[RMDB]
RNA sequence: GGGAACGACUCGAGUAGAGUCGAAAAUACCCAAGACUGGGUAAUUUAUAAAGAAAAAGAGGUUUAAUCGACUCACAAUUGCACAUGGCUGGGGAGGCCUUACAAUCAUGGCAGAAGGUAAAGGAGGAGCAAAGGCACAUAUUACAUGGUGUCAGGCCAAUAACACGGCAUUCGUGCCGUGUUAUUGAAAAGAAACAACAACAACAAC
Reactivity to 2A3 in 0.01 (KOAc 150mM, MgCl2 10mM, bicine 150mM(pH8.5), 24C), signal-to-noise 2, nucleotides 027 to 156: u040a000c000c000c000a070a020g170a120c170u070g010g000g020u020a000a070u070u170u080a190u080a070a100a070g050a060a160a020a000a000g090a080g020g020u060u070u100a030a100u110c040g020a030c010u000c030a010c070a060a140u120u120g030c050a040c020a060u080g020g000c010u020g020g010g030g010a040g010g000c000c000u040u090a020c060a040a070u080c020a020u050g010g000c010a010g010a050a020g040g000u030a050a110a000g010g010a000g010g000a000g000c010a010a020a110g010g030c020a010c000a000u200a050u060u230a080c060a060u150g030g000u010g020u050c030a020g050g000c020
Reactivity to DMS in 0.01 (KOAc 150mM, MgCl2 10mM, bicine 150mM(pH8.5), 24C), signal-to-noise 2, nucleotides 027 to 156: u010a060c010c000c000a100a140g050a180c150u000g000g000g020u000a040a010u010u000u000a080u010a120a090a200g020a080a030a140a110a120g000a070g030g020u010u000u000a140a140u000c030g000a040c010u000c040a080c070a030a070u010u000g000c040a100c050a130u030g040g030c020u000g000g020g030g020a090g000g030c000c020u010u020a070c080a050a030u040c060a040u010g040g050c110a080g000a080a020g010g000u000a040a070a110g000g050a080g010g010a030g030c020a050a030a050g030g000c010a010c010a030u000a140u000u010a150c100a080u000g000g030u010g040u030c020a080g000g000c080
Structure probing data (2A3 and DMS) for a 207-nucleotide construct. Conditions: 150 mM KOAc, 10 mM MgCl2 and 150 mM bicine (pH 8.5), 24 C. The data come from the RNA Mapping Database (RMDB), library OK3TST.